RNA sequence: GGGAACGACUCGAGUAGAGUCGAAAAUCAAAUACAACUGCUACUUUAAAUACGGCUAUUGGUAAUCAAUCAUUGCAAGCAAAUACAACAGGAUAUCAAAAUACAGCCGUCGGUAAUCUUGCAUUGACUGGCAUUCUUAAUUCGUUAAGAAUGCCAGAAAAGAAACAACAACAACAAC
Reactivity to 2A3 in 0.01 (KOAc 150mM, MgCl2 10mM, bicine 150mM(pH8.5), 24C), signal-to-noise 1, nucleotides 027 to 126: u020c030a060a090a000u120a120c040a060a030c080u070g050c020u040a050c090u300u180u250a110a160a000u180a060c000g000g000c030u030a050u100u060g040g000u050a090a150u120c090a030a020u040c000a010u060u010g010c020a010a030g000c000a160a110a040u060a090c010a090a000c010a060g120g000a040u040a040u140c090a090a050a100a000u190a070c180a030g030c000c000g020u010c010g060g010u010a030a030u040c000u000u020g000c050a000u000u050g020a040
Reactivity to DMS in 0.01 (KOAc 150mM, MgCl2 10mM, bicine 150mM(pH8.5), 24C), signal-to-noise 1, nucleotides 027 to 126: u030c130a110a100a100u000a070c120a050a040c040u000g010c030u000a080c070u020u010u020a060a100a080u000a040c150g000g000c040u000a100u000u000g000g020u030a040a090u010c060a120a090u000c080a040u000u000g000c000a000a040g000c170a100a040a040u000a050c100a060a020c080a210g000g000a070u040a080u000c110a030a050a160a140u040a050c160a050g030c010c000g000u000c160g030g000u000a030a090u000c010u000u000g000c000a050u000u000g000a050